[RMDB]
RNA sequence: GGGAACGACUCGAGUAGAGUCGAAAAGAUAUGGAGCGUGUGGUUAAGUGCUGUGUAUCGGAAACGAUACCAGCUCAAACCACCGCUCCUAAGUCAAAAGCUACACACUCUUCGGAGUGUGUAGCAAUCUAGGGAGUACCUUCGGGUACUCCCUAGAAAAAGAAACAACAACAACAAC
Reactivity to DMS in 0.01 (KOAc 150mM, MgCl2 10mM, bicine 150mM(pH8.5), 24C), signal-to-noise 1, nucleotides 027 to 126: g020a030u010a300u000g000g010a020g010c000g040u060g060u010g010g030u000u010a080a150g030u000g050c000u000g000u040g000u010a000u000c020g020g000a070a030a120c000g010a010u000a010c000c000a000g020c000u000c160a050a060a050c020c000a000c000c030g020c000u010c000c000u010a000a030g000u000c010a110a120a110a110g000c000u000a010c010a000c000a000c010u000c000u000u010c280g010g000a030g030u000g010u000g010u000a000g000c020a000a000
Reactivity to 2A3 in 0.01 (KOAc 150mM, MgCl2 10mM, bicine 150mM(pH8.5), 24C), signal-to-noise 2, nucleotides 027 to 126: g030a000u020a000u090g040g000a000g000c040g040u300g040u090g100g150u210u180a300a300g090u120g060c010u020g100u010g000u210a000u010c010g020g050a020a020a020c010g000a000u010a020c010c000a000g020c000u020c050a030a120a000c000c020a010c000c010g010c000u040c000c000u030a000a000g000u000c000a000a000a000a250g000c020u000a000c000a000c000a010c000u000c010u030u240c300g130g020a000g040u060g010u000g000u010a010g000c000a000a000
An RNA of 177 nucleotides, treated with DMS and 2A3 and read out base by base. The 2A3 profile rests on 1,647 reads. It was measured as part of the RMDB library TTRDES. The reactions ran in a buffer of 150 mM KOAc, 10 mM MgCl2 and 150 mM bicine (pH 8.5), at 24 C.